RNA sequence: GGGAACGACUCGAGUAGAGUCGAAAACACUGGCCUCGGCGGAGUCAUAGUGCUGGGUGAACUCGAUAUCGAAGAAGAAGCUCUCGACUUUGACGGUCAGGGUCUUGCGUUCGGCGAGGGACAUGGAUAUCGUCCAGAGAUUCGUCUCUGGACGAUAAAAAGAAACAACAACAACAAC
Reactivity to DMS in 0.01 (KOAc 150mM, MgCl2 10mM, bicine 150mM(pH8.5), 24C), signal-to-noise 2, nucleotides 027 to 126: c050a090c090u010g020g000c080c020u000c080g010g020c060g010g000a100g010u000c040a090u030a060g000u010g030c060u000g000g030g020u010g000a110a150c090u010c020g000a080u010a100u010c040g000a020a140g000a060a140g010a130a120g020c030u000c030u000c180g010a040c030u000u010u000g010a150c100g000g010u010c030a040g010g010g010u000c010u010u010g010c100g010u000u010c080g000g000c010g020a050g020g000g020a090c080a090u000g000g010a220
Reactivity to 2A3 in 0.01 (KOAc 150mM, MgCl2 10mM, bicine 150mM(pH8.5), 24C), signal-to-noise 1, nucleotides 027 to 126: c010a000c010u010g000g040c020c010u040c050g080g000c040g010g200a040g040u020c020a040u070a030g060u070g080c020u090g040g070g020u090g080a070a050c010u000c030g070a080u040a090u220c080g030a040a020g040a030a010g040a020a020g050c000u000c000u030c060g010a030c000u100u090u140g050a050c090g040g000u000c000a030g000g000g050u000c000u020u100g060c050g020u000u080c020g000g020c000g000a000g000g070g010a020c000a110u120g040g000a060
Source: RMDB library OK2TST, as collected in RNAgym. The record gives the reactivity of an RNA of 177 nucleotides to DMS and 2A3. 2A3 adducts were read by reverse transcription with SuperScript II with manganese. The 2A3 profile rests on 1,278 reads. For DMS, 1,746 sequencing reads were counted. Values cover nucleotides 27 to 126. Conditions: 150 mM KOAc, 10 mM MgCl2 and 150 mM bicine (pH 8.5), 24 C.